[RMDB]
RNA sequence: GGGAACGACUCGAGUAGAGUCGAAAAACCCUCCUAUGUAACAUACUCAAGAGCCAAAGGUAAUCUUUCAAUCUUUUAUUUAAAUGCCAUGAUCCAGGAUGGAUUUUAGAUCUUGUUGAAAGCAGCCACAUCCAUGGACUGCACAUAGUCCUCAAAACCUAAAUGGAUGCUUCGGCAUCCAUUUAGGAAAAGAAACAACAACAACAAC
Reactivity to 2A3 in 0.01 (KOAc 150mM, MgCl2 10mM, bicine 150mM(pH8.5), 24C), signal-to-noise 1, nucleotides 027 to 156: a000c010c000c000u070c030c000u120a070u020g020u000a040a040c020a120u120a080c070u060c080a030a130g010a010g060c020c020a090a020a000g010g000u020a030a040u030c050u030u110u030c030a000a010u080c050u000u140u190u050a180u130u100u080a010a050a000u200g050c000c030a020u040g060a110u150c070c050a040g030g020a040u000g010g010a090u040u060u020u040a040g010a030u000c020u040u040g000u030u030g050a040a050a000g000c040a030g020c030c000a060c000a110u000c090c000a020u030g030g030a090c000u010g000c030a000c030a090u130a000g000u040c000c010u070c050a050a080a040a060
Structure probing data (2A3) for a 207-nucleotide construct. It was measured as part of the RMDB library OK3TST. For 2A3, 498 sequencing reads were counted.